Structure probing data (DMS) for a 177-nucleotide construct.
The DMS profile rests on 1,257 reads.
The RNA was probed in 150 mM KOAc, 10 mM MgCl2 and 150 mM bicine (pH 8.5) at 24 C.
Source: RMDB library OK2TRN, as collected in RNAgym.
RNA sequence: GGGAACGACUCGAGUAGAGUCGAAAAAGAAAAUUUAGCGUUAGUUGCGAUGAUGGCUUUGGCUUUUCUCCUUCGCUGUGUCCUCCUAGUAAAAGUUAUGCCGAUGUCAGCCUACCAAGAGAAUGUCCCUUAACGGGGCAUUCGUGCCCCGUUAAGGAAAAGAAACAACAACAACAAC
Reactivity to DMS in 0.01 (KOAc 150mM, MgCl2 10mM, bicine 150mM(pH8.5), 24C), signal-to-noise 1, nucleotides 027 to 126: a110g000a080a060a060a140u000u020u000a100g030c040g000u000u000a110g020u020u010g010c040g010a090u000g020a120u000g010g000c040u000u010u030g000g010c020u000u000u000u000c040u000c040c030u000u010c050g030c070u000g000u010g000u000c030c030u000c010c010u000a070g000u020a020a050a080a100g020u000u000a050u010g010c030c020g000a110u010g020u000c050a080g010c050c010u000a100c090c050a030a110g000a100g010a050a070u000g010u010c070